[RMDB]
RNA sequence: GGGAACGACUCGAGUAGAGUCGAAAAGGAGAAGUCAAUAGUGGAAAAACAAUUAUGACUGAAGAAGAAUCAGAAACAGAAGAUGAGAAUGUGGAAUUAGAUCUAUCAUCAGAAUUUCAUUCUGUCAACAGACCGAGAUGUUCGCAUCUCGGUCUGUAAAAGAAACAACAACAACAAC
Reactivity to DMS in 0.01 (KOAc 150mM, MgCl2 10mM, bicine 150mM(pH8.5), 24C), signal-to-noise 1, nucleotides 027 to 126: g000g040a090g060a190a020g000u000c010a050a150u020a060g000u050g000g000a070a000a100a140a040c120a040a110u000u020a060u000g000a080c000u000g000a070a040g020a150a010g000a040a050u020c150a070g010a110a080a010c040a130g000a110a110g000a010u030g000a060g040a130a110u020g000u000g000g000a020a080u060u020a160g020a080u020c000u000a020u140c040a020u000c010a020g010a050a050u000u030u000c080a000u010u000c000u010g000u000c240a080
Reactivity to 2A3 in 0.01 (KOAc 150mM, MgCl2 10mM, bicine 150mM(pH8.5), 24C), signal-to-noise 1, nucleotides 027 to 126: g030g000a130g000a180a000g020u040c020a000a000u000a040g050u180g130g000a010a000a010a010a010c080a050a040u180u030a000u290g000a030c000u090g050a040a000g050a050a030g010a050a060u210c000a030g090a060a000a000c050a090g030a120a000g000a000u000g050a000g140a180a060u170g100u120g130g120a050a130u140u030a120g080a090u000c000u240a230u110c080a000u000c110a000g090a000a000u020u020u020c000a020u000u000c000u000g080u030c000a020
Chemical mapping of a 177-nucleotide RNA with DMS and 2A3.
The RNA was probed in 150 mM KOAc, 10 mM MgCl2 and 150 mM bicine (pH 8.5) at 24 C.
Values cover nucleotides 27 to 126.
DMS adducts were read by reverse transcription with MarathonRT.
The data come from the RNA Mapping Database (RMDB), library OK1LIB.